This 177-nucleotide RNA was probed chemically with DMS and 2A3. Conditions: 150 mM KOAc, 10 mM MgCl2 and 150 mM bicine (pH 8.5), 24 C. The data come from the RNA Mapping Database (RMDB), library M2PK90.
RNA sequence: GGGAACGACUCGAGUAGAGUCGAAAAAUAAAGUAGUCUCCUGCAGCGUCUGAGGUUUCCGUUGCAGACCUCGGAACCAGGACCUCGGCGUGGCCUAGCGAGUUAUGGCGACGAAGGCCGUGAAAAACAGAAUCUAACAGUUCGCUGUUAGAUUCUGAAAAGAAACAACAACAACAAC
Reactivity to DMS in 0.01 (KOAc 150mM, MgCl2 10mM, bicine 150mM(pH8.5), 24C), signal-to-noise 2, nucleotides 027 to 126: a070u020a030a080a120g010u000a120g010u000c060u000c010c010u000g020c100a200g010c210g020u000c020u010g010a010g000g010u000u000u000c070c180g000u010u010g000c140a100g020a020c030c030u000c010g000g010a040a010c080c010a080g000g010a030c220c020u000c030g000g010c020g000u000g010g010c010c010u010a140g000c060g010a080g020u000u010a090u010g030g000c020g030a070c020g030a140a100g030g010c010c000g030u000g010a040a070a020a110a130
Reactivity to 2A3 in 0.01 (KOAc 150mM, MgCl2 10mM, bicine 150mM(pH8.5), 24C), signal-to-noise 1, nucleotides 027 to 126: a000u140a000a060a020g110u070a020g030u080c080u050c070c040u100g000c110a090g020c020g060u020c010u030g030a040g030g080u020u040u010c110c110g030u150u130g070c090a010g010a080c000c020u030c000g000g000a000a010c010c010a000g000g020a000c000c000u020c040g040g000c030g050u030g020g010c010c010u020a010g030c000g030a000g070u120u120a130u220g070g030c050g030a080c060g000a090a030g030g080c030c000g030u030g000a130a090a010a000a000